Structure probing data (DMS and 2A3) for a 177-nucleotide construct. For DMS the reverse transcriptase was MarathonRT. The RNA was probed in 150 mM KOAc, 10 mM MgCl2 and 150 mM bicine (pH 8.5) at 24 C. For 2A3, 960 sequencing reads were counted.
RNA sequence: GGGAACGACUCGAGUAGAGUCGAAAAGAAGUGGCAGGGACAUGCCCCAUAAGCUCGUUCUAGCAACAUAUGUUUGGCUAGUUCGAGCGAUUAGUCUGGAGGAGCGUCCUCUCGCCUUUUAACGAGAGACGUGACUGGGUUUCGACCCAGUCACGUCAAAAGAAACAACAACAACAAC
Reactivity to DMS in 0.01 (KOAc 150mM, MgCl2 10mM, bicine 150mM(pH8.5), 24C), signal-to-noise 1, nucleotides 027 to 126: g010a000a000g000u140g020g060c090a030g000g040g020a030c000a050u000g060c080c000c000c000a050u000a190a300g000c000u000c000g020u010u000c000u000a000g030c000a030a040c000a190u020a090u090g000u030u020u000g020g000c070u000a000g000u000u000c030g000a000g000c030g000a020u000u120a110g140u000c190u000g020g010a160g000g000a080g020c120g000u000c020c060u070c050u000c000g020c080c000u020u080u000u030a020a000c020g000a060g000a240
Reactivity to 2A3 in 0.01 (KOAc 150mM, MgCl2 10mM, bicine 150mM(pH8.5), 24C), signal-to-noise 1, nucleotides 027 to 126: g230a050a020g030u020g040g000c000a000g000g000g000a000c000a000u080g010c000c080c000c000a000u140a050a000g020c000u000c000g000u000u000c000u000a040g000c050a000a000c000a070u300a050u280g000u220u010u100g300g020c000u020a000g000u000u000c000g000a000g010c000g060a000u000u110a110g020u000c090u000g010g030a070g030g000a000g200c020g000u030c000c000u050c010u000c070g000c000c020u070u000u000u000a110a070c090g000a040g000a050

Background: Values cover nucleotides 27 to 126.